[RMDB]
Chemical mapping of a 177-nucleotide RNA with DMS and 2A3.

RNA sequence: GGGAACGACUCGAGUAGAGUCGAAAAGACGGCCAGGGGGCCGGGAUGUUCGGGAUGCGUCAGGUCCUGAAUGACCCAGGGGUACAGGGGGUACCUCCGCACUAGCGGGCCGGGCCAGGCAAAGCAAGGUGAUUAAAAUUUUCGAAUUUUAAUCACCAAAAGAAACAACAACAACAAC
Reactivity to DMS in 0.01 (KOAc 150mM, MgCl2 10mM, bicine 150mM(pH8.5), 24C), signal-to-noise 4, nucleotides 027 to 126: g000a140c120g010g010c000c010a110g000g000g010g020g040c010c030g000g010g010a070u010g010u000u000c000g000g010g000a040u010g020c080g000u030c230a080g000g010u000c010c000u020g000a030a010u000g000a070c010c010c010a170g020g020g000g010u020a020c040a180g010g000g000g000g000u000a010c030c000u020c000c020g020c030a140c240u010a090g000c010g000g000g010c040c020g000g000g000c010c010a090g010g000c110a120a090a130g020c210a090a110
Reactivity to 2A3 in 0.01 (KOAc 150mM, MgCl2 10mM, bicine 150mM(pH8.5), 24C), signal-to-noise 5, nucleotides 027 to 126: g080a020c060g030g030c030c000a080g150g030g010g060g010c020c000g000g020g000a060u120g000u030u020c000g020g000g000a030u050g300c070g110u180c160a070g080g020u000c010c000u010g020a010a000u040g050a050c000c000c010a010g000g000g000g000u030a030c050a100g150g090g020g040g000u010a010c000c000u010c000c010g000c000a100c080u110a070g020c010g000g000g000c000c010g010g010g000c010c010a010g030g030c030a050a060a050g030c050a110a070